RNA sequence: GGGAACGACUCGAGUAGAGUCGAAAAGAUAUGGAUACCCAAGGGACAUGCCUGGGCUCGGAAACGAGCCUCAGGCAACAGCCCUGGGUAUCCUAAGUCAAACCACUGUUGGUUCGCCAACAGUGGACCAGUGUUUAUCGUUCGCGAUAAACACUGGAAAAGAAACAACAACAACAAC
Reactivity to DMS in 0.01 (KOAc 150mM, MgCl2 10mM, bicine 150mM(pH8.5), 24C), signal-to-noise 2, nucleotides 027 to 126: g000a010u000a030u000g000g000a020u010a020c000c000c010a030a090g040g020g020a060c070a070u020g010c000c000u010g000g020g000c000u010c000g000g010a010a020a030c000g000a020g020c030c010u020c000a000g010g020c000a010a020c190a120g030c010c000c000u000g000g000g030u000a000u000c000c000u010a000a070g000u000c020a130a220a270c000c010a000c010u000g010u000u000g000g000u010u020c260g020c020c000a010a000c010a000g010u010g010g010a050
Reactivity to 2A3 in 0.01 (KOAc 150mM, MgCl2 10mM, bicine 150mM(pH8.5), 24C), signal-to-noise 2, nucleotides 027 to 126: g010a000u030a010u030g000g030a000u000a000c000c020c040a140a220g010g000g010a060c190a300u170g000c000c020u020g000g000g000c000u020c000g010g040a040a010a010c010g010a010g000c020c010u040c000a020g020g040c000a010a000c030a010g010c010c000c000u020g020g020g020u000a000u000c000c000u000a010a000g000u000c020a030a060a120c010c000a000c000u010g000u000u010g040g040u050u120c300g070c120c000a010a000c010a010g000u010g000g000a040